[RMDB]
RNA sequence: GGGAACGACUCGAGUAGAGUCGAAAAUCCAGUACGUUCGCGUACUGGAAAAGUCGCGGCUUGAGGGCGUGUACGGCAGCGCACACUCACGACCCUCAAGCCAAAGUCCGUACUUCGGUACGGACAACCCCCACGAUCAGUUCGCUGAUCGUGGGGGAAAAGAAACAACAACAACAAC
Reactivity to 2A3 in 0.01 (KOAc 150mM, MgCl2 10mM, bicine 150mM(pH8.5), 24C), signal-to-noise 1, nucleotides 027 to 126: u020c000c000a000g030u000a000c000g000u030u020c130g000c000g090u000a000c000u000g000g060a060a000a000a000g110u060c030g050c150g050g000c000u010u000g000a000g030g000g060c010g000u010g040u030a030c060g050g040c000a090g070c110g070c140a060c010a020c110u040c000a040c030g300a300c020c000c010u000c000a000a000g020c020c000a010a000a000g000u000c000c010g020u000a000c010u020u020c230g050g010u010a030c020g000g000a000c010a000a000
The record gives the reactivity of an RNA of 177 nucleotides to 2A3. The 2A3 profile rests on 991 reads. 2A3 adducts were read by reverse transcription with SuperScript II with manganese. Reactivities are given for positions 27 through 126. Source: RMDB library M2PK50, as collected in RNAgym.